[RMDB]
RNA sequence: GGGAACGACUCGAGUAGAGUCGAAAAUGACGAUCCUCUGAUCCAUGGAUCUAGUGUAGCGCUACGAUCGCGCCGUCGUACGUAGUACCGAUCGUACUCGGCCAGUAGUGCGCCGGUACACUCGUGACCCAUACUUGGGCUUCGGCCCAAGUAUGGGAAAAGAAACAACAACAACAAC
Reactivity to DMS in 0.01 (KOAc 150mM, MgCl2 10mM, bicine 150mM(pH8.5), 24C), signal-to-noise 2, nucleotides 027 to 126: u060g020a080c170g000a020u000c000c030u000c060u000g020a210u000c020c080a120u020g000g000a000u010c050u000a100g020u000g010u010a160g020c010g000c020u010a020c030g000a030u000c300g000c170g000c030c020g000u060c150g040u000a020c000g020u020a120g000u000a100c130c120g000a040u010c000g050u000a010c010u000c010g000g020c060c030a090g000u000a080g000u000g000c040g010c120c040g010g020u000a030c010a090c070u000c070g000u000g000a190
Reactivity to 2A3 in 0.01 (KOAc 150mM, MgCl2 10mM, bicine 150mM(pH8.5), 24C), signal-to-noise 1, nucleotides 027 to 126: u130g040a000c110g050a070u030c000c030u030c110u080g060a060u000c030c000a090u130g040g010a020u020c000u010a040g000u050g050u090a060g030c010g000c040u030a020c070g120a210u200c140g050c040g000c040c010g030u070c090g020u020a050c020g000u030a000g080u050a150c050c120g020a060u150c010g000u020a000c020u010c000g080g000c040c020a030g030u050a000g000u040g030c020g000c000c000g130g050u040a010c020a020c010u040c020g150u070g130a090